[RMDB]
RNA sequence: GGGAACGACUCGAGUAGAGUCGAAAAUAAGUGCUGAAAAGAUGAUGAUCAUUCCAGGAUCUGGUUUGCUUUGCACUCUGGUGGCCAAGGAGAACUAUGGACCUGAAAUUAAAAUUUAAAUCACAGGACAGAAGUUAGUUUUCGAACUAACUUCUGUAAAAGAAACAACAACAACAAC
Reactivity to DMS in 0.01 (KOAc 150mM, MgCl2 10mM, bicine 150mM(pH8.5), 24C), signal-to-noise 4, nucleotides 027 to 126: u000a080a110g010u000g020c030u000g000a090a050a130a110g010a050u010g000a100u000g010a090u000c080a070u000u010c050c050a050g000g010a070u000c020u000g010g000u010u010u010g010c100u000u000u000g000c040a050c030u010c210u020g010g010u000g000g000c240c050a030a060g000g000a090g010a030a040c030u000a060u000g020g010a060c000c010u000g000a010a020a040u000u000a040a080a070a060u010u000u000a070a090a070u000c060a090c060a070g010g000
Reactivity to 2A3 in 0.01 (KOAc 150mM, MgCl2 10mM, bicine 150mM(pH8.5), 24C), signal-to-noise 2, nucleotides 027 to 126: u140a060a010g030u030g050c010u020g060a010a000a090a120g040a070u090g010a040u050g000a010u040c020a030u020u100c020c010a010g080g000a130u000c000u020g000g040u000u000u070g030c020u020u050u080g000c020a020c010u070c080u100g230g010u060g020g000c020c010a000a000g030g010a080g010a050a000c030u040a070u190g020g010a010c030c000u000g010a040a050a010u110u090a060a100a010a050u090u150u090a050a060a020u060c030a030c030a060g040g030
The record gives the reactivity of an RNA of 177 nucleotides to DMS and 2A3. For DMS the reverse transcriptase was MarathonRT. It was measured as part of the RMDB library OK2TST. For 2A3, 2,305 sequencing reads were counted. Conditions: 150 mM KOAc, 10 mM MgCl2 and 150 mM bicine (pH 8.5), 24 C.